[RMDB]
RNA sequence: GGGAACGACUCGAGUAGAGUCGAAAACGACGACGAUGCGGCAACGCCAGUUCUGCUGCCGCCCGGAUAUCCUGCUCCUCAACGGUGCGGACACCACGCCAGGCGGCGUGCGCGGCGGCGGUCCGGGCCCUAUCAUCACCUUCGGGUGAUGAUAGGGAAAAGAAACAACAACAACAAC
Reactivity to 2A3 in 0.01 (KOAc 150mM, MgCl2 10mM, bicine 150mM(pH8.5), 24C), signal-to-noise 2, nucleotides 027 to 126: c010g090a010c030g020a040c010g040a020u210g270c010g060g020c070a090a040c050g030c040c020a050g030u140u000c030u090g000c010u010g010c010c010g000c000c000c020g040g020a070u060a050u130c000c030u100g030c010u000c000c020u090c110a140a070c120g020g000u040g010c000g020g010a000c020a030c050c000a050c100g030c010c000a170g150g130c120g000g000c010g060u030g010c060g020c030g040g000c020g020g000c030g010g000u020c020c010g060g080g020
Reactivity to DMS in 0.01 (KOAc 150mM, MgCl2 10mM, bicine 150mM(pH8.5), 24C), signal-to-noise 2, nucleotides 027 to 126: c080g020a110c070g010a100c050g000a090u000g030c000g000g000c040a080a080c050g030c030c010a080g010u000u000c060u000g020c010u000g040c010c010g000c010c050c030g020g010a140u000a060u000c010c000u020g010c010u000c010c000u010c260a070a190c270g000g000u000g000c040g000g010a040c150a110c150c040a030c080g030c010c010a160g000g020c110g010g000c000g010u000g000c110g010c050g040g020c030g020g000c040g000g000u020c030c020g020g020g020
An RNA of 177 nucleotides, treated with 2A3 and DMS and read out base by base. For DMS, 1,939 sequencing reads were counted. Values cover nucleotides 27 to 126. The RNA was probed in 150 mM KOAc, 10 mM MgCl2 and 150 mM bicine (pH 8.5) at 24 C. 2A3 adducts were read by reverse transcription with SuperScript II with manganese. Source: RMDB library OK2TRN, as collected in RNAgym.